The record gives the reactivity of an RNA of 177 nucleotides to 2A3 and DMS. 2A3 adducts were read by reverse transcription with SuperScript II with manganese. As a SHAPE reagent, 2A3 marks flexible, mostly unpaired nucleotides at the ribose 2'-OH. Source: RMDB library OK2TST, as collected in RNAgym.
RNA sequence: GGGAACGACUCGAGUAGAGUCGAAAAAUAUGUGAAAAAUGCUGUAGCAGUGGUUUUCAUUUACUCACCCACUGAACAAGUAUCUCUCAGCUCCUGAUAUGUGCCAGGUACUCUUUAGUCAUUGGGACCUCUAAAUGCGUUUCGACGCAUUUAGAGGAAAAGAAACAACAACAACAAC
Reactivity to 2A3 in 0.01 (KOAc 150mM, MgCl2 10mM, bicine 150mM(pH8.5), 24C), signal-to-noise 1, nucleotides 027 to 126: a000u160a050u120g040u020g020a020a010a010a030a000u050g000c010u090g040u170a080g110c040a010g020u040g000g070u100u000u020u000c040a040u000u120u120a060c060u040c010a060c010c050c000a010c020u000g010a060a010c020a040a000g020u010a030u000c020u020c000u000c030a020g020c020u010c020c040u050g060a050u040a050u300g060u040g030c020c000a000g020g000u000a060c000u080c030u150u110u110a040g000u000c010a030u020u030g050g010g090a130
Reactivity to DMS in 0.01 (KOAc 150mM, MgCl2 10mM, bicine 150mM(pH8.5), 24C), signal-to-noise 1, nucleotides 027 to 126: a090u010a030u000g020u000g000a000a030a020a060a070u000g000c010u000g010u010a150g020c040a010g060u000g000g000u000u000u000u000c030a050u020u000u000a050c070u000c080a230c080c000c020a040c070u010g020a090a050c100a080a050g000u000a040u000c010u000c100u000c120a090g020c070u000c070c040u000g020a040u020a040u010g000u000g020c040c080a040g000g020u000a020c050u000c050u000u000u000a040g010u000c010a070u000u010g000g020g030a140